[RMDB]
Source: RMDB library OK2TRN, as collected in RNAgym. An RNA of 177 nucleotides, treated with DMS and 2A3 and read out base by base. Conditions: 150 mM KOAc, 10 mM MgCl2 and 150 mM bicine (pH 8.5), 24 C. The DMS profile rests on 3,908 reads.

RNA sequence: GGGAACGACUCGAGUAGAGUCGAAAAUGCUCUCGCAGCCUGAUGUUCGGCUAGGGCGUGUCUGCAUUCAACGUAACCAGAUCAUAGCGCAUGCGAGAUGGACGAAGCCCAUGAAUGCGGUCAAUGAACUGACUCAGUGAUUCGUCACUGAGUCAGUAAAAGAAACAACAACAACAAC
Reactivity to DMS in 0.01 (KOAc 150mM, MgCl2 10mM, bicine 150mM(pH8.5), 24C), signal-to-noise 4, nucleotides 027 to 126: u020g010c060u000c020u000c140g040c080a070g010c030c040u000g020a080u000g010u020u000c080g010g020c030u010a160g000g010g030c060g040u000g030u000c040u000g010c010a060u000u000c060a080a120c110g020u010a110a110c040c030a120g010a100u000c070a070u000a150g010c090g000c090a080u000g020c030g000a050g000a070u000g010g000a070c070g050a150a140g010c030c020c010a160u000g000a030a040u000g010c010g010g000u000c020a110a100u000g000a080
Reactivity to 2A3 in 0.01 (KOAc 150mM, MgCl2 10mM, bicine 150mM(pH8.5), 24C), signal-to-noise 4, nucleotides 027 to 126: u060g000c010u000c000u000c040g050c050a020g030c000c030u160g090a110u170g110u140u170c040g050g000c070u080a060g030g030g020c020g040u050g000u000c030u050g000c030a030u030u020c040a080a060c050g040u070a090a090c030c020a030g020a080u080c030a070u090a080g060c070g020c080a070u190g000c040g010a020g000a030u080g030g010a010c020g040a090a010g050c000c000c020a010u030g020a020a010u030g020c050g030g020u030c050a050a120u140g080a060